[RMDB]
RNA sequence: GGGAACGACUCGAGUAGAGUCGAAAAACAAAUGCUGAAGACAUAGGAACUAAAGGACAAAUGUGUUCAAUAGCAGCAGUUACCUGGUGGAAUACAUAUGGGCCCAUAGGGGAUACUGAAGGGUUUGAUUGUCCUCUGAAUUCGUUCAGAGGACAAUAAAAGAAACAACAACAACAAC
Reactivity to DMS in 0.01 (KOAc 150mM, MgCl2 10mM, bicine 150mM(pH8.5), 24C), signal-to-noise 3, nucleotides 027 to 126: a070c040a080a070a090u010g000c010u000g020a080a040g000a090c040a030u010a050g010g020a050a130c060u060a070a070a190g010g000a160c070a050a060a070u020g040u000g000u000u000c020a050a140u040a070g020c030a030g010c110a030g020u000u010a120c020c000u010g020g040u000g000g000a070a050u010a070c110a130u050a090u040g000g000g000c060c020c010a060u050a150g010g010g000g000a080u030a030c040u010g000a080a120g000g020g000u000u010u020g000
Reactivity to 2A3 in 0.01 (KOAc 150mM, MgCl2 10mM, bicine 150mM(pH8.5), 24C), signal-to-noise 5, nucleotides 027 to 126: a000c020a010a040a040u080g020c000u060g010a080a030g070a060c000a080u130a040g090g020a150a080c040u100a140a010a110g090g020a010c020a020a160a160u230g070u020g040u060u010c040a090a170u100a150g080c050a010g000c010a030g010u030u040a020c000c000u080g020g020u040g040g090a090a030u160a170c030a000u180a130u160g020g040g040c000c000c040a020u030a050g000g010g000g040a030u060a220c030u050g050a090a090g080g020g010u030u060u080g050
This 177-nucleotide RNA was probed chemically with DMS and 2A3. The DMS profile rests on 6,918 reads. The reactions ran in a buffer of 150 mM KOAc, 10 mM MgCl2 and 150 mM bicine (pH 8.5), at 24 C. The 2A3 profile rests on 2,834 reads. Source: RMDB library OK1LIB, as collected in RNAgym. For 2A3 the reverse transcriptase was SuperScript II with manganese.